[RMDB]
RNA sequence: GGGAACGACUCGAGUAGAGUCGAAAAGAUAUGGAUCGUACGUAGUCCCUGGACCGUUGAAAUCGGAAACGAUGGAGGUCCCUGGAUGAAGUACGAUCCUAAGUCAAAACUGUGCUUCGGCACAGAACAUUUUAUUCGUGUUCGCACGAAUAAAAUGAAAAGAAACAACAACAACAAC
Reactivity to DMS in 0.01 (KOAc 150mM, MgCl2 10mM, bicine 150mM(pH8.5), 24C), signal-to-noise 7, nucleotides 027 to 126: g010a050u000a300u000g000g010a010u000c000g010u000a000c000g000u000a300g000u000c000c000c020u000g000g010a020c010c000g010u000u010g000a080a140a020u000c000g010g000a120a070a170c010g010a010u000g020g000a110g020g020u000c000c000c030u000g000g000a020u000g000a130a300g000u000a000c000g000a000u000c000c000u000a010a070g000u000c030a090a090a110a180c010u000g010u000g000c000u000u010c230g030g010c010a010c000a010g000a100a160
Reactivity to 2A3 in 0.01 (KOAc 150mM, MgCl2 10mM, bicine 150mM(pH8.5), 24C), signal-to-noise 4, nucleotides 027 to 126: g040a020u080a030u170g000g000a010u010c000g000u000a010c010g010u030a000g010u000c000c010c000u000g000g000a000c000c010g150u290u070g030a030a040a000u010c000g000g040a090a070a040c020g000a010u010g000g050a010g000g000u010c000c000c000u010g000g000a010u040g100a090a040g000u010a000c000g000a000u000c000c010u000a000a000g010u010c010a000a010a150a200c010u000g000u010g020c010u060u080c300g150g000c010a000c000a000g000a020a010